[RMDB]
RNA sequence: GGGAACGACUCGAGUAGAGUCGAAAAGAAAAGACGAUGUUAUUAUGAUUCUCGAGUAAUAGCAGGUCACGCGUACUACUCGCCGAACGGAAGGCCGACUGUUCGCGCAAUGAAACGAGUAAGAAAAAUACUGCAUCGAGUUCGCUCGAUGCAGUAUAAAAGAAACAACAACAACAAC
Reactivity to DMS in 0.01 (KOAc 150mM, MgCl2 10mM, bicine 150mM(pH8.5), 24C), signal-to-noise 2, nucleotides 027 to 126: g000a140a050a120a150g000a050c030g020a110u000g000u010u010a050u070u010a000u000g000a090u000u000c080u010c060g010a240g000u000a030a020u000a010g000c050a040g000g060u000c040a070c300g000c030g030u000a080c110u000a080c050u000c000g010c300c020g000a020a020c040g000g000a030a120g020g000c010c090g000a130c020u010g010u000u000c030g070c030g000c120a130a090u050g020a020a040a060c040g000a090g040u020a000a040g010a000a030a010a040
Reactivity to 2A3 in 0.01 (KOAc 150mM, MgCl2 10mM, bicine 150mM(pH8.5), 24C), signal-to-noise 2, nucleotides 027 to 126: g090a020a030a010a010g040a020c090g030a070u020g000u060u030a030u050u030a010u050g090a150u150u020c090u040c090g020a040g000u020a020a020u000a030g000c010a000g010g040u000c010a010c110g020c010g070u040a040c040u030a010c000u000c000g000c000c000g010a030a000c000g030g030a120a000g070g030c000c000g040a030c030u010g020u010u010c000g010c030g010c130a040a170u160g030a010a020a130c030g000a000g010u070a040a050g090a040a100a000a000